[RMDB]
RNA sequence: GGGAACGACUCGAGUAGAGUCGAAAACGGCGGUAGCGCCCCCUGUGAGAAGGCCCGAGAUGCCCCUGCCACUGUGAACGGUGCCGCCCGACAGGACACGCUCAGCCCCUGACACGCUCGGCUCUGCGUAACAGAGGAUGUUCGCAUCCUCUGUUACAAAAGAAACAACAACAACAAC
Reactivity to 2A3 in 0.01 (KOAc 150mM, MgCl2 10mM, bicine 150mM(pH8.5), 24C), signal-to-noise 3, nucleotides 027 to 126: c010g020g010c000g010g060u110a060g070c010g030c000c000c000c000c000u040g030u040g040a140g030a120a040g060g010c000c010c030g050a070g010a090u110g040c000c000c000c010u040g040c020c010a040c030u030g020u070g110a070a040c050g020g020u040g020c010c000g010c000c000c000g000a010c020a050g030g040a020c010a020c060g020c010u040c020a040g030c000c010c000c000u020g010a010c010a000c050g030c010u010c010g020g000c010u000c020u040g030c030
Reactivity to DMS in 0.01 (KOAc 150mM, MgCl2 10mM, bicine 150mM(pH8.5), 24C), signal-to-noise 3, nucleotides 027 to 126: c200g010g010c040g010g000u000a070g000c020g000c020c010c070c020c000u000g000u000g020a110g010a130a100g000g000c050c050c050g010a130g000a150u020g010c040c010c020c000u000g000c010c040a050c050u010g020u010g010a090a090c100g000g030u030g010c050c050g030c010c000c030g000a070c060a060g030g010a090c070a050c040g020c030u000c050a090g020c040c020c020c060u000g010a070c080a030c110g030c040u000c010g000g000c030u010c010u010g020c240

Source: RMDB libraries RFM100 and RFMREP, as collected in RNAgym. Structure probing data (2A3 and DMS) for a 177-nucleotide construct. The reactions ran in a buffer of 150 mM KOAc, 10 mM MgCl2 and 150 mM bicine (pH 8.5), at 24 C. Values are in units of 0.01, from 0 to 300, in steps of 10. For 2A3 the reverse transcriptase was SuperScript II with manganese. For DMS the reverse transcriptase was MarathonRT.